[RMDB]
RNA sequence: GGGAACGACUCGAGUAGAGUCGAAAAACGUUGAUAGGGAUUUACUCCGAGGAGACGAACUACCACGAACAGGGGAACCUCUACCCGUGGCGUCUCCGUUUGACGAGUAAGUCCUAAGUCAACAUGCCGAGCUACGCCUUCGGGCGUAGCAAAAGAAACAACAACAACAAC
Reactivity to 2A3 in 0.01 (KOAc 150mM, MgCl2 10mM, bicine 150mM(pH8.5), 24C), signal-to-noise 3, nucleotides 027 to 129: a000c030g000u000u000g000a020u020a070g000g000g000a000u000u010u020a000c000u000c000c000g030a060g010g000a010g050a000c000g020a090a040c080u160a080c110c010a010c010g050a140a030c030a140g030g040g020g060a070a070c060c010u010c050u020a040c020c030c000g010u010g010g000c020g010u000c000u000c000c000g000u020u060u080g020a020c000g010a000g000u030a000a020g000u000c000c000u010a000a000g040u000c000a000a000c000a000u080g050c000c010g020a020
Reactivity to DMS in 0.01 (KOAc 150mM, MgCl2 10mM, bicine 150mM(pH8.5), 24C), signal-to-noise 3, nucleotides 027 to 129: a040c210g010u000u000g000a020u020a220g000g000g070a050u000u030u010a020c010u040c020c020g000a060g030g020a030g030a000c000g000a000a000c220u090a300c060c000a070c010g090a120a240c200a150g020g020g000g020a000a000c170c050u030c110u020a000c130c070c020g040u010g000g010c070g010u040c010u010c010c000g000u040u020u020g030a130c300g060a020g050u030a030a010g000u020c010c010u060a000a000g010u000c010a000a000c040a100u020g000c110c010g010a030

This 170-nucleotide RNA was probed chemically with 2A3 and DMS.
For DMS, 6,413 sequencing reads were counted.
The 2A3 profile rests on 8,335 reads.